About this RNA
The record gives the reactivity of an RNA of 177 nucleotides to DMS and 2A3.
RNA sequence: GGGAACGACUCGAGUAGAGUCGAAAAGAUGAGCAGGCGGAUAAUCUUGUGCAGUAUGCAUGCUCGUAACUCCAGCGCACAAGUGGACGCACAAGAUUUGAAUCCAGCAUAGCGCAGGAGCCGCAGACGCUCCUGCUAAUUUCGAUUAGCAGGAGCGAAAAGAAACAACAACAACAAC
Reactivity to DMS in 0.01 (KOAc 150mM, MgCl2 10mM, bicine 150mM(pH8.5), 24C), signal-to-noise 7, nucleotides 027 to 126: g020a050u020g010a040g020c010a020g000g000c030g020g010a110u010a060a030u000c000u000u000g000u000g000c010a160g030u010a050u030g020c030a050u000g000c020u000c010g010u000a060a130c040u000c040c020a100g020c010g010c040a130c190a090a110g020u010g010g010a070c110g000c010a010c010a000a020g000a070u010u020u030g010a150a110u000c000c010a050g000c090a100u020a100g030c040g010c000a100g020g000a020g000c040c020g000c160a090g000a210
Reactivity to 2A3 in 0.01 (KOAc 150mM, MgCl2 10mM, bicine 150mM(pH8.5), 24C), signal-to-noise 9, nucleotides 027 to 126: g090a060u130g010a010g030c040a020g040g040c020g030g000a030u050a130a020u060c010u000u010g010u000g000c070a100g060u110a050u120g040c030a010u060g000c010u000c020g020u030a050a040c020u010c020c020a030g000c010g020c010a030c020a180a100g090u080g100g030a020c040g000c000a000c000a010a000g010a030u030u020u150g090a050a030u010c000c010a010g010c060a110u130a090g020c020g000c030a040g000g030a010g020c010c020g030c020a020g010a050
2A3 adducts were read by reverse transcription with SuperScript II with manganese. DMS adducts were read by reverse transcription with MarathonRT. Source: RMDB library OK1LIB, as collected in RNAgym.